[RMDB]
RNA sequence: GGGAACGACUCGAGUAGAGUCGAAAACGUCAAGGUUCUCCCUCCCUGUUGGGCCCCGAGGAGAUGGAGAAGGAAAAGCAUUGCUUUGGGGAACAGAUUACCUCGUGACCCUGCGCGUGAGCAGGGACGCCUCGGAUGAGUUCGCUCAUCCGAGGCGAAAAGAAACAACAACAACAAC
Reactivity to 2A3 in 0.01 (KOAc 150mM, MgCl2 10mM, bicine 150mM(pH8.5), 24C), signal-to-noise 2, nucleotides 027 to 126: c050g030u110c070a080a040g080g000u040u060c010u060c080c000c020u040c070c000c010u110g020u050u110g040g000g050c000c000c010c000g000a000g030g000a040g000a050u030g060g010a180g000a070a200g070g040a100a060a000a020g010c090a080u050u300g000c000u030u000u000g000g000g000g000a050a000c000a010g080a140u070u110a030c000c030u020c040g000u000g030a040c020c000c010u020g020c060g000c030g190u290g060a020g000c000a000g000g000g010a000